RNA sequence: GGGAACGACUCGAGUAGAGUCGAAAAUCCUGUUCAGUCACAGUCCGAGCGAGCAGCAUUUUUCGUGUGUGAGCCGUCGCAGGCAAUGAGAGCAGCCGAUAGAGAACCUACCGGGGGUGAGAUUCCCCCAUAGUGCAUCAUUCGUGAUGCACUAUGGAAAAGAAACAACAACAACAAC
Reactivity to DMS in 0.01 (KOAc 150mM, MgCl2 10mM, bicine 150mM(pH8.5), 24C), signal-to-noise 9, nucleotides 027 to 126: u010c010c000u000g010u010u000c050a080g010u010c040a040c060a100g010u000c020c030g020a160g010c030g010a100g010c030a300g010c040a030u010u020u010u020u030c130g000u020g000u000g010u000g000a130g010c020c040g010u010c050g010c110a130g010g010c050a070a060u000g000a090g000a070g010c030a060g010c080c070g010a060u010a060g000a220g000a070a110c040c010u010a040c060c050g000g000g000g000g010u010g000a100g000a260u000u000c000c000c000
Reactivity to 2A3 in 0.01 (KOAc 150mM, MgCl2 10mM, bicine 150mM(pH8.5), 24C), signal-to-noise 9, nucleotides 027 to 126: u010c000c000u010g020u030u040c040a070g040u030c020a020c010a040g020u000c010c020g050a040g070c010g030a050g020c020a000g010c020a040u040u040u030u100u200c120g040u070g000u010g010u020g140a060g020c000c010g030u040c020g030c050a040g020g000c010a030a050u100g020a040g000a010g040c020a010g060c050c030g010a020u040a050g090a000g020a050a060c010c000u010a030c010c030g030g010g000g000g030u070g030a130g010a100u020u020c000c000c000

Chemical mapping of a 177-nucleotide RNA with DMS and 2A3. Conditions: 150 mM KOAc, 10 mM MgCl2 and 150 mM bicine (pH 8.5), 24 C. Values cover nucleotides 27 to 126.